[RMDB]
RNA sequence: GGGAACGACUCGAGUAGAGUCGAAAAGAUUGUGGACGUACGCUCACCGAUGUGACCUGGGCCAUACUGAUCCGCUGUCAAGGAGAACGGAAAUGACCACAACAGAGCGCCCGACAACCAUGUGCGACAUGAUCUCGAUCUUCGGAUCGAGAUCAUGAAAAGAAACAACAACAACAAC
Reactivity to DMS in 0.01 (KOAc 150mM, MgCl2 10mM, bicine 150mM(pH8.5), 24C), signal-to-noise 2, nucleotides 027 to 126: g060a080u000u000g050u000g010g020a140c110g000u010a020c140g010c010u000c030a100c060c090g000a100u000g000u000g000a030c040c210u000g010g000g020c050c030a190u010a150c220u000g010a040u010c000c060g010c220u010g010u000c060a050a130g010g050a150g000a040a050c050g020g010a110a000a120u010g020a070c020c010a020c070a020a080c030a090g000a050g010c090g030c040c000c030g010a060c120a040a020c050c050a110u000g010u000g000c090g030a240
Reactivity to 2A3 in 0.01 (KOAc 150mM, MgCl2 10mM, bicine 150mM(pH8.5), 24C), signal-to-noise 2, nucleotides 027 to 126: g110a110u040u060g040u070g030g020a030c030g040u090a010c050g030c030u020c010a050c010c020g080a140u200g070u140g170a010c000c090u080g000g020g070c000c020a080u150a130c070u080g020a060u000c020c000g110c080u100g030u040c000a000a050g100g010a040g040a020a010c020g000g090a070a080a020u080g050a040c020c020a010c000a050a000c020a010g060a010g000c040g000c000c000c000g030a080c030a020a010c000c000a050u110g040u110g120c070g050a020